Source information: The data come from the RNA Mapping Database (RMDB), library OK1LIB. An RNA of 177 nucleotides, treated with 2A3 and read out base by base. The 2A3 profile rests on 477 reads. 2A3 adducts were read by reverse transcription with SuperScript II with manganese.
[RMDB]
RNA sequence: GGGAACGACUCGAGUAGAGUCGAAAAUCAUGGUUAAGUUGGUUUUUAACCACGUUAAAUACCACCUUUGAUGGGGUAUUAACAGAGAUAGAUCAAACCGUCUUUAAAACCAAUUACUGGCGCCAAAGGGUUUGUAGCUAUUCGUAGCUACAAACCCAAAAGAAACAACAACAACAAC
Reactivity to 2A3 in 0.01 (KOAc 150mM, MgCl2 10mM, bicine 150mM(pH8.5), 24C), signal-to-noise 2, nucleotides 027 to 126: u040c060a050u100g050g000u060u020a030a000g080u040u020g000g000u010u010u000u000u030a040a010c050c000a030c010g000u000u040a000a030a000u000a000c000c040a300c120c050u200u210u160g300a300u300g000g000g000g010u000a000u000u020a000a010c010a000g060a000g010a060u130a120g070a010u080c160a140a020a020c080c000g020u020c010u000u070u050a000a030a000a000c000c000a000a000u140u050a100c060u030g080g080c050g000c070c030a050a110a200